[RMDB]
RNA sequence: GGGAACGACUCGAGUAGAGUCGAAAAUGGCCGCCGAGUGGGCUGACGAGUACGAGGAAGGCGCGGAGCUGUUCUGCGCCGUGUUCGACGCCGACGACUUCGACACCGAGUACGGGAAGGCGUACCCGAGUGGCACCACGCUCGCAGUGAAGCGGUGUACUAUCUGGGAUUUCGAUCCCAGAUAGUAAAAAGAAACAACAACAACAAC
Reactivity to DMS in 0.01 (KOAc 150mM, MgCl2 10mM, bicine 150mM(pH8.5), 24C), signal-to-noise 1, nucleotides 027 to 156: u020g040g010c000c030g090c000c020g010a060g020u000g010g030g100c000u030g000a270c020g010a160g000u000a090c020g030a260g010g010a070a110g010g000c020g010c000g070g010a050g020c100u010g010u030u010c000u000g040c000g050c010c000g030u000g000u000u000c000g050a100c000g060c020c070g000a100c070g040a130c020u020u020c060g020a100c000a230c020c020g000a300g010u000a050c000g010g020g040a070a190g000g040c030g030u010a020c000c030c000g010a140g080u000g000g000c030a080c010c010a080c060g000c000u000c030g020c010a180g000u010g000a050a070g010c000g000g030u000g040
Reactivity to 2A3 in 0.01 (KOAc 150mM, MgCl2 10mM, bicine 150mM(pH8.5), 24C), signal-to-noise 2, nucleotides 027 to 156: u050g070g030c000c000g000c010c000g050a020g030u040g010g140g030c010u010g040a020c020g040a020g010u030a040c040g010a090g040g010a110a040g040g050c000g000c000g030g020a080g070c280u140g120u230u000c020u000g000c000g000c000c000g020u020g000u020u060c040g000a020c010g050c060c010g090a130c040g070a100c010u030u030c020g010a050c010a000c060c010g000a010g000u050a030c000g000g100g030a080a030g060g040c160g130u010a030c000c010c000g000a020g010u020g010g030c020a030c040c000a040c000g020c000u040c010g040c040a060g010u030g090a070a000g040c010g000g060u040g020